[RMDB]
RNA sequence: GGGAACGACUCGAGUAGAGUCGAAAAAACUGAUUGUCAUACAGAACAGGAUCGUCGCGUAGCACGUUGUGGGCGAAGUGACUAAAACUUACACAACUCAUCCAAAGCACCCUGCCCGUCGGGCGGCUGCGGAUUAAAUCAGUAGACACGGCUAAGCGGAACACAUGAAGUUCGCUUCAUGUGUUCCAAAAGAAACAACAACAACAAC
Reactivity to 2A3 in 0.01 (KOAc 150mM, MgCl2 10mM, bicine 150mM(pH8.5), 24C), signal-to-noise 2, nucleotides 027 to 156: a000a000c090u120g070a140u280u000g010u120c070a030u020a190c000a180g150a170a020c010a140g080g040a120u130c080g000u000c000g010c040g050u040a010g000c000a010c090g040u020u020g000u000g020g020g000c010g060a040a000g020u020g020a020c020u050a010a000a000a100c090u180u250a060c000a000c000a030a030c000u090c120a020u000c010c010a010a000a010g000c000a010c000c000c000u010g000c000c000c000g100u080c000g010g000g010c070g060g040c000u000g020c000g000g030a000u000u000a000a040a010u130c010a000g010u000a000g000a010c040a040c090g020g000c020u040a080a000g020c020
Chemical mapping of a 207-nucleotide RNA with 2A3. For 2A3 the reverse transcriptase was SuperScript II with manganese. It was measured as part of the RMDB library RSTRND. Reactivities are rounded to 0.1 and cut off at 0 and 3.